[RMDB]
RNA sequence: GGGAACGACUCGAGUAGAGUCGAAAAGAUAUGGAGCACGGAUAAGCUGCUGCACGUUUGACGUUAGCAGAUCGGAAACGAUCUGCUAACCGAGUGCAGAACUACAGCGUAACGUGCUCCUAAGUCACCUGUCAUUUAAGUUCGCUUAAAUGACAGGAAAAGAAACAACAACAACAAC
Reactivity to DMS in 0.01 (KOAc 150mM, MgCl2 10mM, bicine 150mM(pH8.5), 24C), signal-to-noise 3, nucleotides 027 to 126: g010a010u000a020u010g000g000a010g000c000a000c000g010g010a100u020a120a300g000c010u000g010c000u000g000c000a000c000g030u020u010u020g000a300c300g000u000u000a010g000c000a000g000a010u000c000g020g010a010a000a020c000g010a000u000c000u000g010c000u000a000a010c000c030g000a010g000u000g000c000a000g000a060a010c050u020a300c010a000g010c000g010u010a120a260c010g010u000g000c000u000c000c000u000a000a070g000u000c010a240
Reactivity to 2A3 in 0.01 (KOAc 150mM, MgCl2 10mM, bicine 150mM(pH8.5), 24C), signal-to-noise 2, nucleotides 027 to 126: g010a000u020a000u050g000g000a010g020c010a000c010g020g020a020u020a040a010g000c000u030g000c010u000g010c000a010c030g030u080u300u300g060a010c000g000u010u000a000g010c000a000g000a010u000c000g000g000a000a000a000c000g000a000u000c000u000g010c010u000a000a000c000c010g030a000g000u000g000c010a000g010a010a010c070u300a050c010a000g000c000g000u020a000a000c000g000u000g000c000u000c000c000u000a000a000g000u000c000a010
The data come from the RNA Mapping Database (RMDB), library TTRINS.
An RNA of 177 nucleotides, treated with DMS and 2A3 and read out base by base.
The 2A3 profile rests on 16,391 reads.
The reactions ran in a buffer of 150 mM KOAc, 10 mM MgCl2 and 150 mM bicine (pH 8.5), at 24 C.